[RMDB]
RNA sequence: GGGAACGACUCGAGUAGAGUCGAAAAUGCCGGAACUUCUACCCGUCAGUUCAUGACGAGAUGACGAAAUUCUGCAACAUCUCGAGCCCACCUAGUACAACUUGUGAGGGGCUAUGUAGAGACAUGAGCCCUGACUGGAGUUCGCUCCAGUCAGGGCAAAAGAAACAACAACAACAAC
Reactivity to 2A3 in 0.01 (KOAc 150mM, MgCl2 10mM, bicine 150mM(pH8.5), 24C), signal-to-noise 1, nucleotides 027 to 126: u130g000c040c030g050g010a000a040c010u000u000c010u020a050c000c020c010g010u030c010a010g010u160u300c100a040u090g000a010c000g040a020g040a140u070g010a010c070g060a050a040a040u130u000c040u050g010c000a040a000c020a140u030c000u010c020g030a020g000c000c010c000a000c010c000u040a010g060u110a120c050a130a150c130u000u030g020u070g130a230g030g030g030g020c010u000a060u110g100u050a070g040a020g000a030c010a040u100g010a000
Reactivity to DMS in 0.01 (KOAc 150mM, MgCl2 10mM, bicine 150mM(pH8.5), 24C), signal-to-noise 1, nucleotides 027 to 126: u000g000c100c110g000g000a010a020c040u000u000c000u000a270c040c090c040g010u000c000a020g000u000u000c200a070u000g000a070c020g010a000g020a120u000g000a120c140g000a030a000a060u000u000c010u000g000c010a110a050c150a120u000c000u000c020g000a100g000c020c000c050a070c000c040u000a020g010u000a060c260a080a130c060u020u000g020u000g010a170g000g000g020g000c000u000a020u000g010u020a100g050a080g000a020c100a040u000g000a180
Source: RMDB library OK2TST, as collected in RNAgym. Chemical mapping of a 177-nucleotide RNA with 2A3 and DMS. In probing experiments dimethyl sulfate is read out at A N1 and C N3, which are open when not base-paired. The reactions ran in a buffer of 150 mM KOAc, 10 mM MgCl2 and 150 mM bicine (pH 8.5), at 24 C. For DMS, 629 sequencing reads were counted.